[RMDB]
RNA sequence: GGGAACGACUCGAGUAGAGUCGAAAACGGAAGACAGUGAGUGGACGGAACAAAUCCCCUUCCCACCUCCCCACUGUCCACUCACUGUCUUCCUAAAAGGAAAUAUAAAUCGGGGGUGGGAAGGGGACGAUUUAAUGACCUUCGGGUCAUUAAAUCGAAAAGAAACAACAACAACAAC
Reactivity to 2A3 in 0.01 (KOAc 150mM, MgCl2 10mM, bicine 150mM(pH8.5), 24C), signal-to-noise 1, nucleotides 027 to 126: c070g000g000a010a000g020a020c040a010g000u000g120a000g030u000g000g010a000c060g000g000a120a000c050a110a000a000u090c000c000c010c000u000u000c020c020c000a000c020c010u110c050c120c000c010a040c090u020g010u030c000c000a010c010u000c000a000c010u000g050u000c000u000u040c030c000u000a050a050a000a000g170g030a000a020a000u230a000u100a070a270a040u300c100g050g000g000g010g020u000g000g030g000a000a000g000g000g000g010a000
Chemical mapping of a 177-nucleotide RNA with 2A3. Source: RMDB library OK1LIB, as collected in RNAgym.